This 207-nucleotide RNA was probed chemically with 2A3 and DMS. The RNA was probed in 150 mM KOAc, 10 mM MgCl2 and 150 mM bicine (pH 8.5) at 24 C.
RNA sequence: GGGAACGACUCGAGUAGAGUCGAAAAAAGGCAGGAAAACCCAGAUAACAAAAUAAAUAAGAACCUCCAAUACCAACAGUGGCAGCAUAUGACCAGGGUGUCCAGCUCAAACAAGAACGAGCUGCUUCCAAGGCGGCCGUGCUUAGGAACAUACAGAAAAAUAGGCAUAUUUCGAUAUGCCUAUUUUAAAAGAAACAACAACAACAAC
Reactivity to 2A3 in 0.01 (KOAc 150mM, MgCl2 10mM, bicine 150mM(pH8.5), 24C), signal-to-noise 2, nucleotides 027 to 156: a000a000g060g000c030a020g070g020a000a140a020a000c030c030c010a010g040a100u250a080a050c050a060a120a060a050u180a050a060a050u180a070a110g080a050a050c000c040u030c030c010a020a020u070a100c010c050a060a030c000a080g040u050g030g010c000a010g000c010a020u050a040u120g070a050c040c050a010g050g000g000u040g010u000c050c020a010g020c010u030c010a080a140a090c040a050a030g080a030a000c000g000a030g040c000u020g010c020u110u060c090c030a070a020g000g010c000g000g010c020c000g000u000g010c030u070u060a060g000g050a050a010c010a030u220a030c090a040g250a100
Reactivity to DMS in 0.01 (KOAc 150mM, MgCl2 10mM, bicine 150mM(pH8.5), 24C), signal-to-noise 2, nucleotides 027 to 156: a050a040g030g010c010a090g000g020a080a110a080a070c050c020c020a140g030a180u000a110a260c030a090a060a080a140u010a050a090a120u000a090a130g020a120a110c040c020u000c030c050a100a070u000a190c050c030a080a090c080a120g010u000g000g000c040a070g000c040a070u010a060u000g030a110c040c010a060g020g030g000u000g020u000c030c030a060g010c040u000c040a050a050a090c100a030a100g010a030a080c050g000a070g030c000u000g010c020u000u000c060c190a050a100g050g020c010g030g040c050c020g070u010g000c010u000u000a050g000g010a060a070c060a090u000a110c060a100g040a010
Record summary: DMS adducts were read by reverse transcription with MarathonRT. The DMS profile rests on 3,509 reads. The 2A3 profile rests on 1,105 reads. DMS (dimethyl sulfate) methylates the pairing face of unpaired adenines and cytosines.